This 177-nucleotide RNA was probed chemically with 2A3 and DMS. The reactions ran in a buffer of 150 mM KOAc, 10 mM MgCl2 and 150 mM bicine (pH 8.5), at 24 C. Values cover nucleotides 27 to 126.
RNA sequence: GGGAACGACUCGAGUAGAGUCGAAAAGAUAUGGAGGCGGUAAUACUGGAGCUGGCUAUCGGAAACGAUAGCCCAGCGAUGAAAGUGCCAGCCUCCUAAGUCAAAGCAGCUAGUUCGCUAGCUGCAACAAUUCAUGCAAGUUCGCUUGCAUGAAUUGAAAAGAAACAACAACAACAAC
Reactivity to 2A3 in 0.01 (KOAc 150mM, MgCl2 10mM, bicine 150mM(pH8.5), 24C), signal-to-noise 5, nucleotides 027 to 126: g010a000u010a010u070g000g000a000g000g000c070g040g050u140a250a090u150a300c100u130g170g060a090g020c000u000g000g010c000u010a000u010c010g010g010a020a010a000c000g000a010u010a000g030c020c020c000a000g000c000g040a070u160g100a060a060a010g020u020g000c020c040a020g010c010c000u000c000c000u000a000a000g000u000c010a040a060a070g000c000a000g000c000u020a010g020u070u110c230g020c140u000a010g030c000u000g000c000a000a000
Reactivity to DMS in 0.01 (KOAc 150mM, MgCl2 10mM, bicine 150mM(pH8.5), 24C), signal-to-noise 5, nucleotides 027 to 126: g000a030u000a060u010g000g000a020g020g010c000g000g010u000a090a100u010a140c040u010g010g010a110g020c000u000g000g000c000u000a000u010c000g010g010a020a020a040c000g010a000u000a000g000c180c030c030a000g010c010g010a090u000g010a090a100a040g010u000g010c020c030a120g030c000c000u000c000c000u000a000a060g000u000c010a080a110a150g010c000a010g010c000u010a010g010u000u020c210g010c000u000a010g010c000u000g010c000a050a060
Record summary:
For 2A3 the reverse transcriptase was SuperScript II with manganese. The DMS profile rests on 9,229 reads. Source: RMDB library TTRDEL, as collected in RNAgym. For DMS the reverse transcriptase was MarathonRT. For 2A3, 12,115 sequencing reads were counted.